[RMDB]
RNA sequence: GGGAACGACUCGAGUAGAGUCGAAAAGCCACCUCUUCGGAGGUGGCAACAAAAAUACAAAAAUAUACAAACGAUUGUCGUACGCGACAAUCAACACUACGUUCGCGUAGUGAACAACCUACUACGGUAGGUUGAGCAUUAUUCGUGAGAAUAAUGCAAAGAAAAAAAUAAAUACCAAUUAGAGUACACGUGAGUGUACUCAAGUCUUGCUACGGCAAGACAAGGGGUGCGACUCCCCCGUCUAUCCUGAACGUCAUCAGGACCAUAGAACAUGAUUCGUCAUGUUCAAAAGAAACAACAACAACAAC
Reactivity to 2A3 in 0.01 (KOAc 150mM, MgCl2 10mM, bicine 150mM(pH8.5), 24C), signal-to-noise 3, nucleotides 027 to 266: g040c040c060a020c000c070u050c040u080u120c220g120g030a000g030g010u080g010g030c060a020a040c040a020a070a020a020a020u220a030c130a050a160a110a030a010u300a100u120a150c160a060a300a010c170g000a000u000u010g000u000c010g020u050a050c300g040c020g130a010c020a010a010u030c020a040a020c000a000c000u010a000c000g020u020u030c080g010c000g120u000a000g000u010g000a070a010c000a000a010c000c000u010a000c000u030a010c190g190g010u000a000g010g010u000u000g010a010g020c000a000u000u000a000u000u000c000g010u040g070a080g010a020a000u010a010a000u010g010c000a000a100a000g020a040a100a030a040a010a020a020u260a050a070a010u120a070c040c000a010a010u090u040a170g020a000g010u040a010c010a010c050g070u110g160a110g010u010g040u020a000c010u020c020a010a000g000u030c000u020u010g000c010u010a040c250g150g000c000a000a000g000a000c000a010a000g030g000g000g000u010g010c020g010a010c040u060c020c010c010c010c000g010u000c000u010a030u010c000c000u000g000a000a000c000g050u030c070a000u000c000a000g000g010a000c010c000a010u060a050